[RMDB]
RNA sequence: GGGAACGACUCGAGUAGAGUCGAAAACAUACGCAUCCUGUGCGCCUGCACAUUUCGCUCCUUGUGGAGUGGAUUGUGGAAGAUUGGUUACUCCAGCAGGAUAUGUGUCAGCCACCUCUCCGUUUGCAUCUAUUACCUUAAAAUUGUCAAUAUACAACGUGGAUUAGGCCUUCGGGCCUAAUCCACGAAAAGAAACAACAACAACAAC
Reactivity to 2A3 in 0.01 (KOAc 150mM, MgCl2 10mM, bicine 150mM(pH8.5), 24C), signal-to-noise 1, nucleotides 027 to 156: c060a070u200a000c040g010c030a000u070c000c050u070g030u090g000c070g030c060c020u050g090c000a000c030a020u010u000u000c000g000c000u000c000c120u300u290g300u300g140g000a000g000u010g000g000a000u000u060g030u030g010g000a090a000g070a160u220u180g010g020u050u160a110c060u120c060c030a010g000c020a040g020g040a000u050a010u000g060u030g040u040c000a000g010c000c000a040c000c010u020c010u000c010c000g050u000u030u150g060c000a010u000c000u070a010u170u030a100c000c000u130u140a100a210a100a060u160u190g070u140c070a040a060u200a060u070a080c030a090a090